[RMDB]
An RNA of 177 nucleotides, treated with DMS and 2A3 and read out base by base.
For 2A3 the reverse transcriptase was SuperScript II with manganese.
The 2A3 profile rests on 2,017 reads.
RNA sequence: GGGAACGACUCGAGUAGAGUCGAAAAGCGGUAAUUGCCUGUGCUGCACUGGUGGUCUUCGCCGGAGCCCUCGAGUUCAGCGAUUGCGGAUCGAAGACGGGCAAGUUCACCCGGGUGGCCAUCGAGGAUUACGAGGUGAGUUCGCUCACCUCGUAAUAAAAGAAACAACAACAACAAC
Reactivity to DMS in 0.01 (KOAc 150mM, MgCl2 10mM, bicine 150mM(pH8.5), 24C), signal-to-noise 3, nucleotides 027 to 126: g000c020g000g000u000a030a060u050u020g020c010c000u000g010u000g040c020u000g010c090a130c040u020g020g020u000g000g000u000c040u030u010c100g070c010c040g020g000a180g000c020c010c020u000c030g010a160g000u010u000c000a090g000c010g010a120u030u040g010c020g010g000a010u010c030g010a080a130g000a090c160g010g000g010c020a100a100g030u010u010c140a140c200c000c020g010g050g000u000g000g000c020c000a030u000c000g010a130g020g000
Reactivity to 2A3 in 0.01 (KOAc 150mM, MgCl2 10mM, bicine 150mM(pH8.5), 24C), signal-to-noise 3, nucleotides 027 to 126: g010c010g000g060u060a080a090u130u140g040c000c020u110g000u010g000c030u000g010c030a010c030u060g000g010u020g000g000u000c000u030u060c100g100c100c010g000g020a020g000c000c020c000u010c010g070a070g030u070u060c020a020g000c040g090a180u180u300g000c030g010g000a010u020c010g050a060a000g060a060c130g000g000g000c020a020a070g070u120u120c060a070c020c010c020g000g000g010u030g010g000c000c000a000u030c010g060a060g060g000